[RMDB]
An RNA of 207 nucleotides, treated with 2A3 and read out base by base. 2A3 adducts were read by reverse transcription with SuperScript II with manganese. The 2A3 profile rests on 1,650 reads. The RNA was probed in 150 mM KOAc, 10 mM MgCl2 and 150 mM bicine (pH 8.5) at 24 C. It was measured as part of the RMDB library OK3TST.

RNA sequence: GGGAACGACUCGAGUAGAGUCGAAAACUACGCGCUCACCGUGCGCUUCACCGCGCAGGGCGGGCUCAACACCGCAGCCUUCGUCUACUCCAUCGACGGCGACAACUUCUCGGAUGAGAUCACCGUCCCCGUCACUGGCAGCUACGAGAUCGAGGGCGCGUACAGGUUUAUUCGUAAACCUGUACGCAAAAGAAACAACAACAACAAC
Reactivity to 2A3 in 0.01 (KOAc 150mM, MgCl2 10mM, bicine 150mM(pH8.5), 24C), signal-to-noise 3, nucleotides 027 to 156: c070u130a090c090g000c000g000c010u010c000a030c010c010g290u000g010c020g020c010u130u170c080a100c060c090g000c010g000c030a040g090g000g000c020g000g000g010c000u010c040a120a140c090a040c060c070g090c130a020g020c000c000u010u010c000g010u000c020u050a020c010u010c010c020a030u070c130g000a010c000g020g000c000g000a000c000a080a060c030u090u040c020u020c000g300g120a260u300g010a120g020a010u080c060a020c140c040g020u020c050c070c010c000g000u010c000a010c080u020g020g060c040a030g000c040u120a130c130g130a010g010a070u210c050g010a010g000g000g000c020